[RMDB]
RNA sequence: GGGAACGACUCGAGUAGAGUCGAAAAGGGCUGGGUCUUUUGGAGCUGAGGACUCGGGAAAUGCAGCAGCAAAGGCGAACCCUGGGCUGCUUUGAAGGCGCUGCCAUCUGAGGAGCCUUCUCCUGGAACCACUACUUUAAUUCGUUAAAGUAGUGGUAAAAGAAACAACAACAACAAC
Reactivity to DMS in 0.01 (KOAc 150mM, MgCl2 10mM, bicine 150mM(pH8.5), 24C), signal-to-noise 9, nucleotides 027 to 126: g000g010g010c050u010g010g000g010u000c010u010u010u010u020g000g010a090g010c100u010g000a080g010g010a110c060u010c040g010g010g000a060a070a080u030g000c120a030g010c010a040g010c040a030a040a040g000g000c160g000a130a270c060c010c020u000g000g000g010c000u000g000c010u010u010u010g010a040a040g000g010c020g000c080u010g010c030c040a080u020c070u010g010a170g000g010a160g010c030c010u000u000c020u000c050c020u000g010g010a210
Reactivity to 2A3 in 0.01 (KOAc 150mM, MgCl2 10mM, bicine 150mM(pH8.5), 24C), signal-to-noise 9, nucleotides 027 to 126: g050g020g020c060u060g030g030g030u040c030u020u100u060u100g070g020a050g010c030u030g050a030g030g030a060c000u000c020g020g010g020a040a090a030u200g020c050a010g000c000a010g010c020a060a040a020g030g000c090g050a080a070c010c000c000u010g000g030g000c010u020g000c000u060u010u060g030a040a010g020g000c060g030c140u100g030c020c020a090u070c080u110g060a080g020g020a030g020c000c000u030u030c010u020c000c010u020g040g040a030